An RNA of 177 nucleotides, treated with 2A3 and DMS and read out base by base. Reactivities are rounded to 0.1 and cut off at 0 and 3. 2A3 adducts were read by reverse transcription with SuperScript II with manganese. For DMS, 3,017 sequencing reads were counted. The RNA was probed in 150 mM KOAc, 10 mM MgCl2 and 150 mM bicine (pH 8.5) at 24 C. It was measured as part of the RMDB library M2PK50.
[RMDB]
RNA sequence: GGGAACGACUCGAGUAGAGUCGAAAAAUGCACUGGUUCGCCAGUGCAUGAUUACCGAGAAAGUACCUCGGUAUAAAAGUGCAACCCUUGGAAACAAGGGAUUUCCGAACCGAUUCGUCGGUUCGAACUGAGUGAAUGUGUUCGCACAUUCACUCAGAAAAGAAACAACAACAACAAC
Reactivity to 2A3 in 0.01 (KOAc 150mM, MgCl2 10mM, bicine 150mM(pH8.5), 24C), signal-to-noise 2, nucleotides 027 to 126: a010u000g000c000a000c010u010g000g040u030u020c080g060c110c010a000g000u000g000c000a000u000g000a000u000u020a000c000c000g000a000g000a040a260a030g170u090a070c020c000u000c000g020g040u000a000u030a000a020a000a000g130u110g090c040a070a120c000c020c000u000u000g020g010a030a030a030c010a000a010g000g060g000a000u010u050u040c070c010g000a020a010c010c000g010a020u010u050c200g050u020c010g070g000u000u010c000g000a010a020
Reactivity to DMS in 0.01 (KOAc 150mM, MgCl2 10mM, bicine 150mM(pH8.5), 24C), signal-to-noise 3, nucleotides 027 to 126: a000u000g010c000a010c010u000g010g020u000u010c200g020c000c000a000g020u000g000c000a000u000g000a140u010u000a010c010c000g000a010g000a100a170a160g000u010a120c120c000u000c000g010g000u010a010u010a040a040a080a080g000u000g000c150a120a110c000c000c010u000u000g000g000a140a090a210c000a000a010g010g000g010a030u000u010u010c070c000g000a010a010c000c010g000a020u010u010c170g010u000c010g000g000u000u000c000g000a020a080